[RMDB]
RNA sequence: GGGAACGACUCGAGUAGAGUCGAAAAGAUAUGGAUGGAGAACACCGAUGAAACCCAUCUUUCGGAAACGAAAGAGUGGGUGGAGGUGACCAUCCUAAGUCAAAGGCUGUGACUUCGGUCACAGCCACGUUAAAUUCUACUUCGGUAGAAUUUAACGAAAAGAAACAACAACAACAAC
Reactivity to DMS in 0.01 (KOAc 150mM, MgCl2 10mM, bicine 150mM(pH8.5), 24C), signal-to-noise 5, nucleotides 027 to 126: g000a040u000a300u010g010g000a010u000g010g000a150g010a190a150c010a010c010c000g010a120u020g010a140a210a050c000c000c000a080u000c000u000u000u000c000g000g000a120a080a240c010g010a010a020a010g000a030g030u000g000g020g000u000g000g010a060g010g020u010g010a100c010c000a000u000c000c000u000a030a090g010u000c040a090a130a130g000g000c010u000g020u000g000a000c000u000u010c210g040g010u000c000a010c010a010g010c010c010a010
Reactivity to 2A3 in 0.01 (KOAc 150mM, MgCl2 10mM, bicine 150mM(pH8.5), 24C), signal-to-noise 4, nucleotides 027 to 126: g020a010u060a040u120g000g010a000u010g030g030a300g130a300a110c010a000c020c040g170a300u130g130a230a120a020c000c000c000a020u010c000u000u010u000c000g030g000a080a020a030c010g010a010a020a000g070a050g290u110g000g000g000u010g020g030a030g000g010u010g020a020c000c000a000u000c010c000u010a110a010g030u010c040a110a050a140g010g000c010u000g000u010g010a010c000u050u120c300g100g000u000c010a000c000a000g000c000c010a000